Source: RMDB library M2PK90, as collected in RNAgym. Structure probing data (DMS and 2A3) for a 177-nucleotide construct. The RNA was probed in 150 mM KOAc, 10 mM MgCl2 and 150 mM bicine (pH 8.5) at 24 C. The 2A3 profile rests on 1,418 reads. DMS adducts were read by reverse transcription with MarathonRT. 2A3 adducts were read by reverse transcription with SuperScript II with manganese.
RNA sequence: GGGAACGACUCGAGUAGAGUCGAAAAUUAAAGGAGGCCGAGAAACCUUUUUAGAGAUAAGGAAACCGGCGCGCGCGCGCUGGCUGGCCUGCGCAUUGGAUAGGGUAGGUACACGCGCGCGAAAAAACAGGAAUAUAAAGUUCGCUUUAUAUUCCUGAAAAGAAACAACAACAACAAC
Reactivity to DMS in 0.01 (KOAc 150mM, MgCl2 10mM, bicine 150mM(pH8.5), 24C), signal-to-noise 2, nucleotides 027 to 126: u000u020a090a020a140g010g000a120g040g030c000c000g000a140g000a140a130a120c000c000u010u010u000u010u010a100g000a290g000a140u000a040a050g010g000a030a140a210c080c000g000g010c000g010c040g010c010g010c010g010c000g020c180u010g000g010c090u000g000g010c000c000u000g010c040g010c100a150u000u000g000g000a130u010a090g000g000g010u000a050g030g010u000a070c060a030c040g000c000g010c000g000c000g000a000a030a050a070a050a070
Reactivity to 2A3 in 0.01 (KOAc 150mM, MgCl2 10mM, bicine 150mM(pH8.5), 24C), signal-to-noise 1, nucleotides 027 to 126: u030u020a040a060a020g060g030a090g050g030c020c060g100a120g020a250a160a050c060c000u140u000u030u060u080a170g060a000g020a120u090a110a020g010g020a110a000a000c010c000g010g000c020g000c000g000c000g040c000g000c000g010c110u020g080g050c030u040g040g040c020c020u000g000c190g010c040a140u080u190g140g090a120u190a160g060g000g010u000a000g040g010u110a090c010a000c020g010c000g000c000g000c000g000a020a000a000a000a000a000